Structure probing data (2A3 and DMS) for a 170-nucleotide construct.
For DMS the reverse transcriptase was MarathonRT.
It was measured as part of the RMDB library 15KLIB.
The DMS profile rests on 5,800 reads.

RNA sequence: GGGAACGACUCGAGUAGAGUCGAAAAGGAGAGGGACGCGAUGGUAAGAGUGGAGGAAAGUUCGGAGGGAAAUCCCAAGAAGGUCAUUCGAGAUUCAAGAGGUGAGGAGGGAUCCCCGAGACGCUGGAUAGACCGAGCUUCGGCUCGGUCAAAAGAAACAACAACAACAAC
Reactivity to 2A3 in 0.01 (KOAc 150mM, MgCl2 10mM, bicine 150mM(pH8.5), 24C), signal-to-noise 2, nucleotides 027 to 129: g030g030a010g020a000g050g000g000a000c040g030c040g120a080u110g090g000u030a080a010g010a020g060u090g070g000a000g000g000a060a030a000g070u030u040c000g000g020a010g010g020g040a050a050a040u020c030c000c010a030a040g050a030a000g040g020u080c030a040u110u110c110g000a020g020a010u160u100c090a070a000g000a000g050g000u050g000a000g010g010a000g010g010g000a020u010c060c040c000c000g050a040g000a020c070g000c090u020g010g000a010u050a130
Reactivity to DMS in 0.01 (KOAc 150mM, MgCl2 10mM, bicine 150mM(pH8.5), 24C), signal-to-noise 2, nucleotides 027 to 129: g000g000a070g020a070g070g000g010a020c090g020c100g030a000u020g000g030u020a080a100g040a060g010u040g010g060a020g000g070a020a030a080g040u040u060c030g000g000a120g050g000g020a060a030a130u030c040c030c030a080a090g030a030a090g010g030u010c080a050u040u000c110g000a090g010a060u050u010c000a160a090g070a070g070g080u010g020a050g000g020a060g020g000g000a040u040c010c050c050c030g060a120g010a040c130g010c050u050g020g020a090u000a050